[RMDB]
The record gives the reactivity of an RNA of 177 nucleotides to DMS and 2A3.
For DMS the reverse transcriptase was MarathonRT.
The reactions ran in a buffer of 150 mM KOAc, 10 mM MgCl2 and 150 mM bicine (pH 8.5), at 24 C.
RNA sequence: GGGAACGACUCGAGUAGAGUCGAAAAGACUACAACUUCGGUUGUAGUCAAAUAAAAGCGUGUUCCGACUUCACGGUACAAGUACACGCAUGAAGUAUAAAAAAACCGGUUCCUUCGGGAACCGGAACACUGCAUUAGUGUUCGCACUAAUGCAGUGAAAAGAAACAACAACAACAAC
Reactivity to DMS in 0.01 (KOAc 150mM, MgCl2 10mM, bicine 150mM(pH8.5), 24C), signal-to-noise 2, nucleotides 027 to 126: g000a020c010u000a000c020a000a030c000u010u040c160g040g030u010u000g000u000a010g010u000c010a000a040a040u030a080a070a090a130g010c030g000u000g010u000u000c020c150g000a070c080u010u010c140a130c160g000g000u000a040c110a040a090g000u000a010c040a040c000g000c070a050u010g020a030a080g030u000a090u040a030a010a170a100a020a090a100c000c000g020g000u000u000c000c010u000u000c100g060g020g000a010a000c000c000g000g000a010a020
Reactivity to 2A3 in 0.01 (KOAc 150mM, MgCl2 10mM, bicine 150mM(pH8.5), 24C), signal-to-noise 2, nucleotides 027 to 126: g000a000c000u010a000c000a010a000c010u030u070c170g150g000u000u000g000u000a000g000u030c000a000a000a000u020a010a080a000a010g030c040g000u020g010u040u020c000c020g040a040c030u180u110c120a060c140g010g010u160a080c050a170a080g030u000a010c040a010c030g020c050a000u070g050a050a030g100u100a070u210a190a220a030a020a000a010a020c000c000g020g000u000u010c000c000u010u050c180g050g040g000a000a000c000c000g000g000a000a030